[RMDB]
RNA sequence: GGGAACGACUCGAGUAGAGUCGAAAAGUACUACCGUUCGCGGUAGUACAAAUAAUCCAGCCUGGAAAGGCUGGAGCCAAAACUAUGGUAAAGGGACCAUAGAAAGAGCAGAGUUCGCUCUGCUCAAGUCUAUAUCCUGCUUCGGCAGGAUAUAGACAAAAGAAACAACAACAACAAC
Reactivity to DMS in 0.01 (KOAc 150mM, MgCl2 10mM, bicine 150mM(pH8.5), 24C), signal-to-noise 1, nucleotides 027 to 126: g000u000a000c000u000a000c000c000g060u010u010c240g030c010g050g000u000a000g010u000a000c000a010a100a090u000a130a140u000c000c000a000g020c000c000u000g010g010a160a100a030g000g020c000u000g000g000a010g010c010c020a040a110a110a200c030u000a000u010g000g000u000a030a130a110g040g000g010a090c030c010a020u000a000g010a110a030a100g000a010g000c000a000g000a040g000u000u020c290g000c000u000c000u010g010c000u010c000a030a100
Reactivity to 2A3 in 0.01 (KOAc 150mM, MgCl2 10mM, bicine 150mM(pH8.5), 24C), signal-to-noise 2, nucleotides 027 to 126: g000u010a000c000u000a000c010c010g040u050u030c290g000c020g080g000u020a000g000u010a010c010a000a000a010u040a000a000u000c010c000a010g020c020c000u080g090g120a170a070a010g000g000c000u000g000g000a000g000c000c010a060a030a010a090c000u010a000u010g010g000u080a110a130a300g180g040g020a030c000c000a020u000a000g100a120a110a020g010a000g000c000a000g010a020g020u030u080c140g060c080u000c000u000g000c000u010c010a000a000